[RMDB]
RNA sequence: GGGAACGACUCGAGUAGAGUCGAAAAGGGCCGGGUGCAUCCCUCGUGGUGCUACGAAUGCCUACAGCUGGCCUCUGCUGUAGAAGCCUACUGUAUAUCUCCUGAUAUACAGUAGAUACCUGCAAGGGAGAGUAGAUCACUUCGGUGAUCUGCUUUCAAAAGAAACAACAACAACAAC
Reactivity to 2A3 in 0.01 (KOAc 150mM, MgCl2 10mM, bicine 150mM(pH8.5), 24C), signal-to-noise 9, nucleotides 027 to 126: g020g010g010c010c010g020g000g030u060g030c020a050u030c010c010c010u040c020g070u130g010g010u050g000c000u030a040c040g080a070a040u110g010c000c000u010a010c010a010g000c000u040g010g030c000c010u040c010u030g000c000u000g000u020a010g010a080a010g020c000c000u000a000c000u000g000u010a000u000a000u000c060u070c070c110u150g000a000u000a000u000a000c000a000g000u000a000g000a000u010a020c000c010u010g030c030a030a040g050g020
Reactivity to DMS in 0.01 (KOAc 150mM, MgCl2 10mM, bicine 150mM(pH8.5), 24C), signal-to-noise 9, nucleotides 027 to 126: g000g000g010c010c020g000g010g000u010g010c060a070u000c010c010c090u020c160g010u020g010g010u010g000c020u010a100c120g000a110a080u030g010c030c000u000a030c030a070g000c000u000g000g000c020c020u010c030u000g010c010u000g000u010a070g000a090a100g010c070c000u000a010c000u000g000u000a000u000a000u000c000u030c220c270u030g000a010u000a000u000a000c000a010g000u000a000g000a080u010a030c050c020u000g010c100a100a110g000g010